Chemical mapping of a 177-nucleotide RNA with 2A3 and DMS. For DMS the reverse transcriptase was MarathonRT. Reactivities are rounded to 0.1 and cut off at 0 and 3. Conditions: 150 mM KOAc, 10 mM MgCl2 and 150 mM bicine (pH 8.5), 24 C.

RNA sequence: GGGAACGACUCGAGUAGAGUCGAAAAACACAAGCCUAGAUGAGGUCUAUUGGCCCUGCAGUCACUCGAGAGCAAUCCCCAGCUUUCCUUCGCAACUCGAAUGGGAGAUUGGACUUCCCUGGGCCAAUCGGUAGAGUUAGUUCGCUAACUCUACCGAAAAAGAAACAACAACAACAAC
Reactivity to 2A3 in 0.01 (KOAc 150mM, MgCl2 10mM, bicine 150mM(pH8.5), 24C), signal-to-noise 2, nucleotides 027 to 126: a010c060a000c050a080a060g000c010c010u060a120g010a220u140g060a030g040g030u000c040u100a090u010u110g100g070c000c000c000u040g070c130a040g020u060c010a010c110u030c040g070a050g000a010g050c000a030a160u060c020c000c000c000a000g000c000u000u030u080c000c020u030u100c060g030c090a060a110c030u050c040g060a110a050u090g000g020g010a100g000a040u050u160g040g000a010c000u020u020c020c000c000u020g000g030g020c010c030a020a060
Reactivity to DMS in 0.01 (KOAc 150mM, MgCl2 10mM, bicine 150mM(pH8.5), 24C), signal-to-noise 3, nucleotides 027 to 126: a100c060a080c160a100a090g010c020c000u000a080g010a120u010g000a070g000g020u000c040u010a090u000u010g010g010c000c010c020u000g010c160a070g000u000c040a080c050u010c110g000a040g040a080g010c020a050a170u010c020c010c010c080a070g010c050u000u000u000c030c030u000u010c060g010c150a120a050c140u010c050g030a060a080u010g010g000g010a120g000a100u000u000g020g000a060c020u000u000c020c050c000u000g000g020g010c010c040a010a050